[RMDB]
Source: RMDB library OK1LIB, as collected in RNAgym. An RNA of 177 nucleotides, treated with 2A3 and read out base by base. 2A3 adducts were read by reverse transcription with SuperScript II with manganese.

RNA sequence: GGGAACGACUCGAGUAGAGUCGAAAACUGCGGCUGUCGCUGCUGAAGCCUCCAACGUAAGCGCAGCGGCGCAUGACGCCUCCUCCGCGCUUCAUGACGCCAGCGCAACGGCUCACGAUAUAUCCGCCCGAAGGCUGGUCUUCGGACCAGCCUUCGGAAAAGAAACAACAACAACAAC
Reactivity to 2A3 in 0.01 (KOAc 150mM, MgCl2 10mM, bicine 150mM(pH8.5), 24C), signal-to-noise 1, nucleotides 027 to 126: c070u000g000c000g010g050c030u100g000u220c120g030c070u100g070c020u150g050a000a050g040c000c000u040c070c010a160a080c030g070u200a110a000g000c000g000c010a050g070c070g000g000c030g000c000a000u190g000a100c030g000c000c000u160c020c030u150c160c070g030c040g050c080u030u000c000a000u040g060a130c040g020c040c060a000g000c010g000c000a000a080c010g000g000c000u010c070a010c010g010a000u070a000u000a030u160c000c010g030c030